Conditions: 150 mM KOAc, 10 mM MgCl2 and 150 mM bicine (pH 8.5), 24 C. This 207-nucleotide RNA was probed chemically with DMS and 2A3. For 2A3 the reverse transcriptase was SuperScript II with manganese. It was measured as part of the RMDB library OK3TST.
RNA sequence: GGGAACGACUCGAGUAGAGUCGAAAAUCGUCUACGCGUGGUUCAGCGGACAGCUCUCUCAUUGCCCGUGCGAAAAUGAAAAGAUACAAGCGGUCUACGAAGAAGUCAUCAGCGCCGUCUAGUUAGAGCGCAAGGGAUGGCCGGACUGCGCGAGCUGGAUGUCUUUAACCUUCGGGUUAAAGACAUCAAAAGAAACAACAACAACAAC
Reactivity to DMS in 0.01 (KOAc 150mM, MgCl2 10mM, bicine 150mM(pH8.5), 24C), signal-to-noise 1, nucleotides 027 to 156: u010c070g020u010c010u000a070c040g030c020g040u000g030g000u010u000c000a190g050c000g020g030a080c030a050g010c040u000c070u000c070u000c050a150u000u000g010c050c000c070g030u010g020c090g020a070a060a050a090u020g000a060a050a110a060g030a260u010a040c170a130a140g030c000g100g040u000c010u000a080c050g010a080a140g000a050a060g100u010c030a030u000c000a120g030c040g090c000c000g010u030c040u010a160g080u000u000a100g010a070g000c000g020c010a110a120g020g030g000a050u000g020g050c010c040g000g000a060c020u020g010c000g000c070g050a140g000c010u010g000
Reactivity to 2A3 in 0.01 (KOAc 150mM, MgCl2 10mM, bicine 150mM(pH8.5), 24C), signal-to-noise 3, nucleotides 027 to 156: u110c020g090u030c030u130a140c040g000c010g010u040g000g030u030u020c010a050g040c030g040g040a030c040a050g000c000u020c000u000c000u010c050a060u040u120g010c000c060c010g050u070g010c110g120a120a070a000a070u170g080a030a060a010a040g110a030u180a170c060a070a030g060c010g020g000u000c030u010a050c090g050a100a050g020a070a010g040u020c010a020u020c020a050g020c000g000c040c030g060u080c020u070a070g100u130u140a040g020a000g020c000g020c090a060a010g200g010g010a030u030g030g000c000c010g000g000a000c000u000g000c000g000c000g000a030g000c080u020g080